An RNA of 177 nucleotides, treated with 2A3 and DMS and read out base by base. It was measured as part of the RMDB library OK2TRN. Conditions: 150 mM KOAc, 10 mM MgCl2 and 150 mM bicine (pH 8.5), 24 C. The 2A3 profile rests on 1,102 reads. 2A3 adducts were read by reverse transcription with SuperScript II with manganese.
RNA sequence: GGGAACGACUCGAGUAGAGUCGAAAAGGGCCAGUGGGGCUCGAACCCGAUCAACGUCGGCUUCGGCGUGAUGGCCGACUCCACUGACGCGACGGCGGCGCACUUCAUCGUCCCGCUGAACCCCGGCUGAAGAAAGCCUUUUCGAAGGCUUUCUUCAAAAAGAAACAACAACAACAAC
Reactivity to 2A3 in 0.01 (KOAc 150mM, MgCl2 10mM, bicine 150mM(pH8.5), 24C), signal-to-noise 1, nucleotides 027 to 126: g050g000g020c030c020a000g000u000g000g000g000g070c070u030c020g000a060a060c000c000c030g110a090u030c020a140a100c020g010u010c000g050g110c160u300u260c080g010g000c050g030u050g030a030u030g000g000c020c000g010a000c020u010c010c000a020c000u040g040a040c020g020c040g300a000c040g000g020c010g020g000c100g020c120a020c030u060u110c060a080u100c070g060u050c000c040c000g000c030u040g080a120a100c030c000c000c000g200g010c100
Reactivity to DMS in 0.01 (KOAc 150mM, MgCl2 10mM, bicine 150mM(pH8.5), 24C), signal-to-noise 2, nucleotides 027 to 126: g000g030g040c010c000a020g010u000g000g000g000g040c290u010c040g020a050a080c170c040c110g000a080u000c000a040a050c040g020u000c000g020g020c260u000u010c000g000g030c000g020u000g000a020u000g020g020c130c010g000a050c060u000c010c040a040c000u010g020a050c000g000c020g000a150c080g000g020c000g000g000c110g030c130a080c050u000u010c300a080u000c260g000u000c020c020c010g020c040u010g000a080a120c060c010c010c140g010g000c180